[RMDB]
RNA sequence: GGGAACGACUCGAGUAGAGUCGAAAAUACAAGCUGUUGCUGUGUCAGAGGACGAUGGUGUCGUUCUGAUGCUUCAGUUCCUCUCUCAGGGAUCCAACAUUCACGACAUACGCAUUGCCGUAUUGACGUAGCUGCAUGACUUCGGUCAUGCAGCUACAAAAGAAACAACAACAACAAC
Reactivity to DMS in 0.01 (KOAc 150mM, MgCl2 10mM, bicine 150mM(pH8.5), 24C), signal-to-noise 2, nucleotides 027 to 126: u000a120c180a070a060g000c010u000g020u000u000g000c010u000g000u000g000u000c080a070g000a050g000g010a080c000g020a110u000g030g020u010g020u000c000g010u000u000c130u010g000a010u000g020c010u000u000c090a070g020u010u000c000c000u000c020u000c060u000c120a080g000g000g010a040u000c120c080a050a060c080a160u000u000c110a050c140g030a070c050a010u000a050c110g020c040a120u020u000g010c080c040g020u020a080u000u000g020a110c240
Reactivity to 2A3 in 0.01 (KOAc 150mM, MgCl2 10mM, bicine 150mM(pH8.5), 24C), signal-to-noise 1, nucleotides 027 to 126: u150a000c060a040a030g000c000u050g030u120u020g090c020u050g040u050g050u130c020a010g010a010g060g000a000c010g030a050u100g040g030u110g010u020c010g080u170u000c130u180g010a010u020g000c030u030u020c010a000g020u080u040c000c010u000c010u000c000u030c050a030g010g090g000a080u060c010c040a050a010c020a070u080u100c100a060c130g060a010c020a020u060a010c000g000c090a140u040u240g030c120c020g000u000a000u080u050g060a010c040
Structure probing data (DMS and 2A3) for a 177-nucleotide construct. For DMS the reverse transcriptase was MarathonRT.